[RMDB]
Chemical mapping of a 177-nucleotide RNA with 2A3.
It was measured as part of the RMDB library RFM100.
The RNA was probed in 150 mM KOAc, 10 mM MgCl2 and 150 mM bicine (pH 8.5) at 24 C.
RNA sequence: GGGAACGACUCGAGUAGAGUCGAAAAUUUCGGCAAACGUCGCAUUAUUAUAUGUGCUUUUUCACUUCGUUGCAAAAGCACGGAAAAAACUUUUUUCGGAAGCUGAGGCUUCCUGCAAAAAGUUUUUGCAUGGUCUCUUAUUCGUAAGAGACCAUGCAAAAGAAACAACAACAACAAC
Reactivity to 2A3 in 0.01 (KOAc 150mM, MgCl2 10mM, bicine 150mM(pH8.5), 24C), signal-to-noise 3, nucleotides 027 to 126: u020u010u030c030g010g010c030a140a230a060c110g070u010c000g000c110a030u000u100a120u250u120a110u200a040u300g000u010g000c010u050u000u010u030u020c010a010c100u180u160c260g270u300u010g000c010a010a010a000a000g000c000a000c000g010g010a090a070a000a000a000a030c020u010u000u000u000u000u000c020g000g000a020a000g020c020u030g080a070g140g060c000u010u010c040c000u020g010c000a000a000a000a000a040g000u010u010u000u000u000